[RMDB]
RNA sequence: GGGAACGACUCGAGUAGAGUCGAAAAGAUAUGGACCAUCCGAAGCGAUAAGCUGCAUUCGGAAACGAAUGAUAGCUUUUGACGCUUACAAGGAUGGUCCUAAGUCAAACGUGGCUUCGGCCACGAACCGGAUUUACAUGUUCGCAUGUAAAUCCGGAAAAGAAACAACAACAACAAC
Reactivity to 2A3 in 0.01 (KOAc 150mM, MgCl2 10mM, bicine 150mM(pH8.5), 24C), signal-to-noise 1, nucleotides 027 to 126: g030a000u060a040u170g010g000a000c000c040a000u000c010c000g010a020a010g000c030g030a080u010a180a000g000c010u000g000c000a010u020u000c010g040g080a090a050a020c000g030a000a000u050g180a290u070a050g030c060u000u090u100u160g250a100c010g070c040u000u140a120c100a220a220g000g000a000u000g020g010u000c000c000u000a000a000g000u000c010a020a010a080c030g000u000g000g010c020u060u150c200g190g000c000c000a000c010g000a010a030
Reactivity to DMS in 0.01 (KOAc 150mM, MgCl2 10mM, bicine 150mM(pH8.5), 24C), signal-to-noise 1, nucleotides 027 to 126: g020a090u000a300u020g000g010a020c000c030a010u000c020c020g000a020a020g000c020g050a220u010a020a010g020c000u000g020c020a000u000u000c020g000g020a160a150a190c000g010a030a000u000g020a050u000a000g020c000u000u000u010u010g040a220c060g010c000u000u020a150c090a270a300g040g020a000u000g000g010u000c000c000u000a000a010g020u000c030a100a050a240c000g040u000g000g020c050u000u020c140g010g000c000c020a000c020g000a080a080

Notes: Conditions: 150 mM KOAc, 10 mM MgCl2 and 150 mM bicine (pH 8.5), 24 C. Chemical mapping of a 177-nucleotide RNA with 2A3 and DMS. For DMS the reverse transcriptase was MarathonRT. For 2A3, 2,202 sequencing reads were counted.